[RMDB]
An RNA of 207 nucleotides, treated with 2A3 and read out base by base. 2A3 adducts were read by reverse transcription with SuperScript II with manganese. Values cover nucleotides 27 to 156. Conditions: 150 mM KOAc, 10 mM MgCl2 and 150 mM bicine (pH 8.5), 24 C.
RNA sequence: GGGAACGACUCGAGUAGAGUCGAAAAGUUCGCCUGCGAGCCGUCAUAGAUCUUUCGCGCGAAACCCCGCCAUGGGUAAAGCUCGGCAAAGGGCACGAAAUCGGCAUGCGCCUCGAUCUGGUUGGCCUUCAGCGCGCCGCCGGCGACCUCUGGCGCCUCGUUCUUUGACGUUCGCGUCAAAGAACGAAAAAGAAACAACAACAACAAC
Reactivity to 2A3 in 0.01 (KOAc 150mM, MgCl2 10mM, bicine 150mM(pH8.5), 24C), signal-to-noise 1, nucleotides 027 to 156: g040u000u000c040g010c050c050u020g000c020g010a040g030c030c030g010u140c100a160u050a210g060a130u100c060u060u150u020c030g030c030g000c000g040a050a070a100c080c000c000c000g050c040c000a130u120g000g010g000u070a220a140a090g020c060u120c050g000g000c000a090a070a170g000g030g030c040a020c040g030a030a020a090u180c060g050g010c030a050u180g100c100g000c050c050u030c070g050a140u010c110u100g100g000u130u160g230g000c000c070u000u120c050a040g070c000g050c050g000c070c000g000c030c000g030g010c030g050a010c000c010u010c010u000g020g010c010g040c000c060